[RMDB]
RNA sequence: GGGAACGACUCGAGUAGAGUCGAAAAAGGUGAAACAAUAGCACAUGGUAAAGUUGGGCAGGGGAUAUCUGCAUGGAGUAAGACCUUCUGUGCUCUGUUUGGCCCAUGGUUUCGCGCUAUUGAGAAACCAGUAUGACAGGUUCGCCUGUCAUACUGGAAAAGAAACAACAACAACAAC
Reactivity to DMS in 0.01 (KOAc 150mM, MgCl2 10mM, bicine 150mM(pH8.5), 24C), signal-to-noise 3, nucleotides 027 to 126: a080g020g010u010g020a090a130a110c030a040a020u000a030g000c010a090c020a050u010g020g020u010a070a050a110g030u000u010g020g000g000c020a070g000g010g000g000a080u010a040u010c050u000g010c020a080u010g000g010a070g000u000a120a080g010a130c160c040u000u000c070u000g010u000g000c010u000c080u000g010u000u000u000g020g000c080c000c010a050u000g010g000u010u010u010c110g020c090g000c060u000a030u010u000g010a110g010a120a080a090
Reactivity to 2A3 in 0.01 (KOAc 150mM, MgCl2 10mM, bicine 150mM(pH8.5), 24C), signal-to-noise 2, nucleotides 027 to 126: a010g090g000u150g020a090a060a030c010a010a010u040a010g000c010a010c010a140u030g050g000u200a240a120a110g020u050u040g020g000g000c010a020g000g050g000g050a040u030a060u150c030u110g020c000a030u160g060g000a070g050u130a150a070g060a090c000c000u020u080c020u020g070u000g050c000u020c010u000g070u050u040u060g030g000c030c020c010a010u030g000g070u070u160u220c060g000c000g000c030u000a030u050u110g020a050g100a060a040a070
This 177-nucleotide RNA was probed chemically with DMS and 2A3. In probing experiments dimethyl sulfate is read out at A N1 and C N3, which are open when not base-paired. DMS adducts were read by reverse transcription with MarathonRT.